An RNA of 177 nucleotides, treated with DMS and 2A3 and read out base by base. Reactivities are given for positions 27 through 126.
RNA sequence: GGGAACGACUCGAGUAGAGUCGAAAACUAUGGAUGCGGUUAUUAAAGAUUAUGGCAUUGGAUUAUUUGCUGUAGAAGAUAAAGAGUCCCAUCAAUGGAUAGGCUUUAUAGGUUUGAAUUAUAUUCCCAUCAGUCUUCGAUUCGUCGAAGACUGAUGAAAAGAAACAACAACAACAAC
Reactivity to DMS in 0.01 (KOAc 150mM, MgCl2 10mM, bicine 150mM(pH8.5), 24C), signal-to-noise 3, nucleotides 027 to 126: c050u010a060u020g020g000a020u000g010c150g000g010u020u020a090u000u020a050a080a120g030a100u030u000a020u010g000g000c010a010u000u000g010g000a100u030u030a080u020u000u010g030c030u010g000u000a040g000a120a070g000a080u000a060a090a070g010a160g000u010c030c000c030a080u030c090a150a040u020g000g030a050u000a080g000g010c010u000u000u000a040u010a070g000g000u020u000u020g000a050a040u020u010a090u040a180u020u000c000c020
Reactivity to 2A3 in 0.01 (KOAc 150mM, MgCl2 10mM, bicine 150mM(pH8.5), 24C), signal-to-noise 3, nucleotides 027 to 126: c030u050a060u040g050g030a000u030g030c090g060g090u150u000a130u060u260a120a030a060g080a100u090u040a010u080g020g000c000a000u010u070g040g050a080u100u050a050u120u250u090g030c030u010g000u050a020g050a300a030g020a070u140a040a120a000g050a010g020u020c030c000c020a020u050c030a060a040u060g020g010a030u020a070g030g000c010u020u030u020a070u010a010g130g000u010u140u030g070a070a020u200u130a050u050a030u300u000c000c000

Notes: For 2A3 the reverse transcriptase was SuperScript II with manganese.